Structure probing data (DMS and 2A3) for a 177-nucleotide construct. DMS adducts were read by reverse transcription with MarathonRT.

RNA sequence: GGGAACGACUCGAGUAGAGUCGAAAAGAUGAAUGGGCUCCAUCUUAUACCGAGUGAUUGGGGCGGAGAAAGAUUCUUUACCAACCAGGUCUUUCUCCGGUAUAGGGAAGAGAGGGGUCCGUACUCACUCGGAGUCUUGAUUCGUCAAGACUUCGAGAAAAGAAACAACAACAACAAC
Reactivity to DMS in 0.01 (KOAc 150mM, MgCl2 10mM, bicine 150mM(pH8.5), 24C), signal-to-noise 6, nucleotides 027 to 126: g020a070u040g010a090a040u040g000g000g000c000u000c000c000a130u000c000u000u000a070u020a300c010c010g000a150g010u030g000a130u010u010g010g000g010g010c030g010g010a020g000a000a010a010g010a020u010u040c010u010u030u040a120c160c200a060a110c300c170a050g010g000u010c010u000u010u000c010u000c010c000g010g010u000a070u030a140g000g010g000a140a150g000a040g000a100g000g000g010g000u010c010c000g020u010a030c060u000c050a250
Reactivity to 2A3 in 0.01 (KOAc 150mM, MgCl2 10mM, bicine 150mM(pH8.5), 24C), signal-to-noise 9, nucleotides 027 to 126: g080a060u180g060a070a100u070g000g000g000c000u000c010c000a300u020c010u020u090a120u120a110c000c020g020a050g100u180g070a180u090u140g030g010g030g060c000g000g000a000g000a000a010a000g010a010u300u280c030u100u180u120a160c070c040a070a030c030c050a010g000g000u000c000u000u000u000c000u000c000c000g000g000u080a070u100a060g030g030g040a070a040g020a020g010a060g020g000g000g000u000c000c000g000u010a020c010u010c020a030
For 2A3, 24,673 sequencing reads were counted. The RNA was probed in 150 mM KOAc, 10 mM MgCl2 and 150 mM bicine (pH 8.5) at 24 C.